Background: Conditions: 150 mM KOAc, 10 mM MgCl2 and 150 mM bicine (pH 8.5), 24 C. Structure probing data (2A3 and DMS) for a 177-nucleotide construct. For 2A3 the reverse transcriptase was SuperScript II with manganese. Values cover nucleotides 27 to 126.

[RMDB]
RNA sequence: GGGAACGACUCGAGUAGAGUCGAAAAGAUAUGGACGCACCCAGCGAGGAUAGUGGUCGGAAACGACCAUUUAUCCAUUUGAGCUGGUGCGUCCUAAGUCAAAAGCUACAAUGUUCGCAUUGUAGCAGUAAUAAAAGCACUUCGGUGCUUUUAUUACAAAAGAAACAACAACAACAAC
Reactivity to 2A3 in 0.01 (KOAc 150mM, MgCl2 10mM, bicine 150mM(pH8.5), 24C), signal-to-noise 1, nucleotides 027 to 126: g000a020u020a030u040g010g000a000c020g020c000a010c000c250c040a020g010c010g000a030g000g000a000u000a010g000u000g010g010u010c000g000g030a020a000a000c000g020a000c000c020a000u010u030u010a000u000c000c000a000u070u060u070g010a010g010c010u020g000g000u000g000c000g000u010c000c000u000a000a000g000u000c000a010a020a000a110g000c000u010a010c010a000a010u010g040u060u140c300g030c180a000u000u000g000u010a000g000c020a010
Reactivity to DMS in 0.01 (KOAc 150mM, MgCl2 10mM, bicine 150mM(pH8.5), 24C), signal-to-noise 6, nucleotides 027 to 126: g000a020u000a010u010g000g000a010c010g010c010a010c190c130c180a010g020c000g000a010g040g010a010u000a000g010u000g000g010u000c000g030g010a000a010a020c000g020a020c000c000a000u000u010u010a010u000c000c000a300u000u000u010g010a040g000c000u000g010g010u000g000c000g000u000c000c000u000a000a050g010u000c000a080a070a100a150g010c010u000a010c000a010a000u000g010u000u010c220g020c000a010u000u000g000u000a010g000c000a050